An RNA of 177 nucleotides, treated with DMS and 2A3 and read out base by base. For DMS, 5,020 sequencing reads were counted. For 2A3, 5,834 sequencing reads were counted. The RNA was probed in 150 mM KOAc, 10 mM MgCl2 and 150 mM bicine (pH 8.5) at 24 C.

RNA sequence: GGGAACGACUCGAGUAGAGUCGAAAACAGUACAAACGGACGAUCGGCAGUCGGUUUGAACGCAUUGAUACGAUUGACGAUAUGGCGAGCAGCCCAUUUGCCGACCUGUUCAGCGGUAGUCAGGGGGGACACAGAUAUCGUUCGCGAUAUCUGUGUCAAAAGAAACAACAACAACAAC
Reactivity to DMS in 0.01 (KOAc 150mM, MgCl2 10mM, bicine 150mM(pH8.5), 24C), signal-to-noise 5, nucleotides 027 to 126: c070a120g010u010a080c060a040a070a150c140g000g000a030c020g000a060u000c020g010g000c010a050g010u000c230g010g030u000u020u000g010a050a060c050g010c040a080u010u000g010a090u000a080c050g020a300u010u020g010a100c040g010a100u010a040u000g010g010c010g010a060g010c060a020g000c030c000c040a070u010u000u000g010c010c000g010a020c050c010u010g020u000u000c010a060g020c140g010g000u000a060g010u010c070a090g000g010g000g010g010
Reactivity to 2A3 in 0.01 (KOAc 150mM, MgCl2 10mM, bicine 150mM(pH8.5), 24C), signal-to-noise 5, nucleotides 027 to 126: c020a020g130u180a060c030a030a130a000c060g020g010a010c010g040a090u010c010g000g000c010a010g000u020c020g030g000u140u210u120g030a030a010c010g000c030a030u030u180g090a050u130a160c070g090a120u040u300g130a050c020g030a060u030a050u120g120g010c010g000a010g040c000a010g000c010c010c000a060u200u150u090g000c000c000g000a020c020c040u120g010u020u030c020a030g040c040g080g030u060a040g040u050c060a040g000g000g000g000g030
2A3 adducts were read by reverse transcription with SuperScript II with manganese.